The record gives the reactivity of an RNA of 207 nucleotides to 2A3. It was measured as part of the RMDB library OK3TST. Reactivities are given for positions 27 through 156.

RNA sequence: GGGAACGACUCGAGUAGAGUCGAAAAUGGAUGGUUGGCUAUGAUUUUGCUCGUGGUGUGGGUUUUGCAAAUCCGCAUUGGGCCGUGGACCGCUAUGUCCAGUUUACCGAAAUAAAAACUUUAAAUCAAUUGCUGUAUUCCAACAAUCGCUGUCCUCCGCCAAGCUAGUUUUCGAACUAGCUUGGCGAAAAGAAACAACAACAACAAC
Reactivity to 2A3 in 0.01 (KOAc 150mM, MgCl2 10mM, bicine 150mM(pH8.5), 24C), signal-to-noise 1, nucleotides 027 to 156: u150g010g010a010u010g070g030u150u110g030g000c000u050a040u190g030a150u020u080u140u070g000c000u030c040g060u070g060g000u000g000u000g010g070g000u000u000u060u040g050c010a000a000a090u000c000c000g000c010a000u000u160g000g010g000c000c050g040u050g000g000a060c000c010g000c140u030a050u170g040u000c000c010a040g000u000u020u040a170c140c020g010a050a070a000u100a000a090a060a080a020c100u130u140u300a030a010a150u090c030a000a250u150u130g000c010u120g060u160a040u220u000c080c010a010a000c000a000a080u090c080g020c070u000g000u000c000c000u000c000